[RMDB]
Chemical mapping of a 177-nucleotide RNA with 2A3 and DMS. For 2A3 the reverse transcriptase was SuperScript II with manganese. For DMS, 2,774 sequencing reads were counted.
RNA sequence: GGGAACGACUCGAGUAGAGUCGAAAAUGCCUUGGUACACACCGCCUAACUCCGUCGCGGCUGCAAUGCACGCCCCGGCUAUGGCGUGGGCCGCGCUGGCGCCGCAAUACGCCAGCACCUGGGCUUGCUAACGAUGAGCAUUCGUGCUCAUCGUUAGAAAAGAAACAACAACAACAAC
Reactivity to 2A3 in 0.01 (KOAc 150mM, MgCl2 10mM, bicine 150mM(pH8.5), 24C), signal-to-noise 2, nucleotides 027 to 126: u100g000c000c010u010u010g020g020u120a070c090a010c010a030c080c040g020c000c000u060a120a060c040u030c060c060g040u030c020g000c020g020g000c000u010g000c080a220a300u280g000c020a010c130g020c000c000c010c010g020g000c030u110a130u220g010g000c050g010u030g000g000g020c030c030g050c020g000c020u000g000g000c010g000c010c030g130c020a020a050u110a110c020g000c000c000a000g010c000a020c000c020u010g000g000g000c000u030u120g040
Reactivity to DMS in 0.01 (KOAc 150mM, MgCl2 10mM, bicine 150mM(pH8.5), 24C), signal-to-noise 3, nucleotides 027 to 126: u010g020c010c000u000u020g020g010u000a080c160a140c100a090c080c120g000c020c020u000a120a100c070u000c050c080g010u010c020g020c300g010g000c020u000g010c070a100a060u020g000c010a020c160g010c000c010c040c020g020g010c070u000a060u010g010g020c050g020u000g030g000g030c070c070g040c070g000c020u000g000g000c030g040c060c070g000c260a110a070u000a110c040g010c000c000a020g000c020a070c030c010u000g000g000g020c030u000u000g010